The record gives the reactivity of an RNA of 177 nucleotides to DMS and 2A3. For 2A3 the reverse transcriptase was SuperScript II with manganese. Conditions: 150 mM KOAc, 10 mM MgCl2 and 150 mM bicine (pH 8.5), 24 C. Source: RMDB library 15KREP, as collected in RNAgym. Reactivities are rounded to 0.1 and cut off at 0 and 3. For 2A3, 1,001 sequencing reads were counted.

RNA sequence: GGGAACGACUCGAGUAGAGUCGAAAACCGAGCGAAGGGUCCGCGUGGGGAGGAAACGCAACCCGAGAGUGAGAUGAACGACAAGGGGCGAAGAUCCUCGGAAGGAAUUCUCCCAAGAAGCGAAGAGGGUAUCAACUAGGUUCGCCUAGUUGAUACCAAAAGAAACAACAACAACAAC
Reactivity to DMS in 0.01 (KOAc 150mM, MgCl2 10mM, bicine 150mM(pH8.5), 24C), signal-to-noise 1, nucleotides 027 to 126: c050c010g000a080g030c030g000a220a050g000g000g000u010c180c080g090c000g000u000g010g030g050g030a000g000g010a040a130a180c010g000c010a240a050c110c000c030g000a030g000a050g050u010g050a050g000a120u010g000a210a110c080g000a020c090a190a040g000g000g000g000c070g000a110a050g000a120u010c000c000u000c110g030g000a090a130g030g000a080a130u000u000c000u010c000c000c000a050a180g000a030a300g010c050g000a050a070g000a180g000
Reactivity to 2A3 in 0.01 (KOAc 150mM, MgCl2 10mM, bicine 150mM(pH8.5), 24C), signal-to-noise 1, nucleotides 027 to 126: c000c000g010a040g000c030g070a110a000g130g000g000u140c050c030g030c030g000u060g000g090g000g010a080g010g000a060a030a000c000g020c010a050a060c000c000c040g000a010g000a000g040u210g010a050g000a050u080g030a090a000c010g090a000c130a070a110g000g000g020g000c020g080a030a030g030a060u050c000c010u000c000g000g030a040a010g000g030a040a030u070u000c020u070c050c000c000a020a020g070a040a020g080c040g050a100a070g080a060g160